[RMDB]
Source information:
An RNA of 177 nucleotides, treated with DMS and read out base by base. Conditions: 150 mM KOAc, 10 mM MgCl2 and 150 mM bicine (pH 8.5), 24 C. The data come from the RNA Mapping Database (RMDB), library RFMREP.
RNA sequence: GGGAACGACUCGAGUAGAGUCGAAAAUCAGAUGCCCUGGGCUGCACGCGCAAUACAAUAGCAGGUAGAGAGAGAGACAGGAAGGUGCUCAGAUGGACUAUGUGCUGUAAGGCACAUACGAAAGAGGCUCUUUCAACUGGUUCGCCAGUUGAAAGAGAAAAGAAACAACAACAACAAC
Reactivity to DMS in 0.01 (KOAc 150mM, MgCl2 10mM, bicine 150mM(pH8.5), 24C), signal-to-noise 1, nucleotides 027 to 126: u000c120a120g020a140u000g010c000c020c000u040g040g010g000c030u000g090c030a030c090g030c090g030c060a060a040u020a130c090a080a090u010a080g010c060a060g000g000u000a070g010a190g000a140g000a040g010a110g000a120c060a090g030g030a080a080g010g010u010g010c000u000c040a030g000a090u000g010g010a190c300u020a000u000g010u000g000c000u030g020u030a100a030g010g010c000a000c010a000u000a030c100g030a040a080a080g010a110g010g000